[RMDB]
RNA sequence: GGGAACGACUCGAGUAGAGUCGAAAACUACGGCCUGGACGCGGUGAUCAUCUUGGACGCCGACAGCAACGAACGGCUGGUUACCGAUGACCUCGCGGAUGUGCUGACCCGGCUGGAGCCGGUCGCCACUGUCAGUCAUCUUCGGAUGACUGACAGUAAAAGAAACAACAACAACAAC
Reactivity to 2A3 in 0.01 (KOAc 150mM, MgCl2 10mM, bicine 150mM(pH8.5), 24C), signal-to-noise 3, nucleotides 027 to 126: c030u070a040c030g030g020c010c010u030g120g070a020c000g010c000g010g010u050g040a220u020c010a010u030c050u050u230g060g020a020c030g020c020c010g020a020c030a030g060c080a100a160c130g100a100a020c000g030g060c070u050g130g000u080u070a110c000c030g000a040u040g030a030c000c000u030c040g020c000g020g000a060u060g070u080g080c030u030g020a040c050c030c000g010g000c070u180g160g000a080g020c000c000g000g000u010c040g030c080c040
Reactivity to DMS in 0.01 (KOAc 150mM, MgCl2 10mM, bicine 150mM(pH8.5), 24C), signal-to-noise 1, nucleotides 027 to 126: c040u010a060c030g000g020c110c040u000g000g000a100c030g000c000g000g050u000g020a080u000c030a020u000c060u020u000g010g000a180c080g000c030c040g010a070c130a110g010c200a030a090c160g020a110a100c050g000g000c070u020g000g000u040u000a060c080c060g010a050u000g010a070c010c010u000c050g000c000g030g020a070u030g000u020g010c020u040g000a040c160c040c060g000g000c000u050g060g000a180g010c000c000g000g000u000c010g000c030c000
An RNA of 177 nucleotides, treated with 2A3 and DMS and read out base by base. It was measured as part of the RMDB library OK1LIB. The RNA was probed in 150 mM KOAc, 10 mM MgCl2 and 150 mM bicine (pH 8.5) at 24 C.